[RMDB]
RNA sequence: GGGAACGACUCGAGUAGAGUCGAAAACAUGCAUCAAAUGGAACUUGCUAAUGGUACACAUACCGGUUCAGCAUUUGAUGGUACUAUGUAUGGUGCCUUUAUGGAUAAACAAGUGCACCAAGUUCAGCCAUUGCUAGUUCUUCGGAACUAGCAAUGGAAAAGAAACAACAACAACAAC
Reactivity to 2A3 in 0.01 (KOAc 150mM, MgCl2 10mM, bicine 150mM(pH8.5), 24C), signal-to-noise 2, nucleotides 027 to 126: c000a010u080g000c000a010u020c000a000a010a020u000g010g010a010a010c010u080u060g020c050u150a100a050u080g000g110u260a040c150a010c030a150u070a030c020c000g000g030u010u000c040a110g020c000a110u030u000u000g000a000u020g010g000u020a020c040u050a010u150g070u020a090u070g000g000u000g000c000c000u070u010u070a180u120g210g020a110u160a060a070a030c070a040a000g050u060g090c000a000c000c030a000a020g030u010u030c060a010g020
Reactivity to DMS in 0.01 (KOAc 150mM, MgCl2 10mM, bicine 150mM(pH8.5), 24C), signal-to-noise 2, nucleotides 027 to 126: c050a050u000g010c020a000u000c020a010a010a000u000g010g000a000a010c010u000u010g060c170u000a070a040u010g000g010u000a090c230a110c060a140u000a090c110c180g010g010u000u000c030a100g000c010a020u000u000u000g000a020u000g000g010u000a050c160u020a040u000g000u000a090u000g000g000u000g000c010c000u000u000u000a110u000g010g010a180u020a080a060a080c210a020a020g000u040g000c000a010c000c000a020a070g000u000u000c100a130g010